[RMDB]
RNA sequence: GGGAACGACUCGAGUAGAGUCGAAAAGGUAUGCAGAGGUGUGGUUGAUUGUGCUUUGAAUGUUGUUUGUAUAGAUAAGGAGUUAUUUUCAUAGAACAGAAACAGGACUUGAGCCUCCAGCACAGUCCACUAGACCCUUGUUCGCAAGGGUCUAGUGAAAAGAAACAACAACAACAAC
Reactivity to DMS in 0.01 (KOAc 150mM, MgCl2 10mM, bicine 150mM(pH8.5), 24C), signal-to-noise 3, nucleotides 027 to 126: g000g020u000a030u010g000c070a040g000a020g000g000u000g030u020g000g010u000u020g010a040u010u000g000u000g010c050u000u000u010g000a120a120u010g010u000u000g010u000u010u000g020u010a080u040a080g000a060u030a060a070g000g000a100g000u010u010a100u030u010u020u000c070a050u030a050g000a070a070c100a060g000a090a030a060c270a060g010g000a040c030u010u000g010a110g010c050c010u010c050c050a100g020c000a060c070a060g010u010c030
Reactivity to 2A3 in 0.01 (KOAc 150mM, MgCl2 10mM, bicine 150mM(pH8.5), 24C), signal-to-noise 3, nucleotides 027 to 126: g080g030u130a050u100g030c020a050g010a060g070g080u120g020u040g100g050u100u060g020a070u000u070g000u020g020c000u150u030u110g120a250a260u130g070u040u020g030u000u080u120g170u040a140u080a080g160a030u120a160a080g050g000a020g030u120u020a090u060u160u020u000c020a070u110a180g130a120a050c040a080g170a020a110a080c110a010g050g000a030c000u000u050g020a020g000c000c010u050c070c000a010g020c000a000c000a010g020u030c010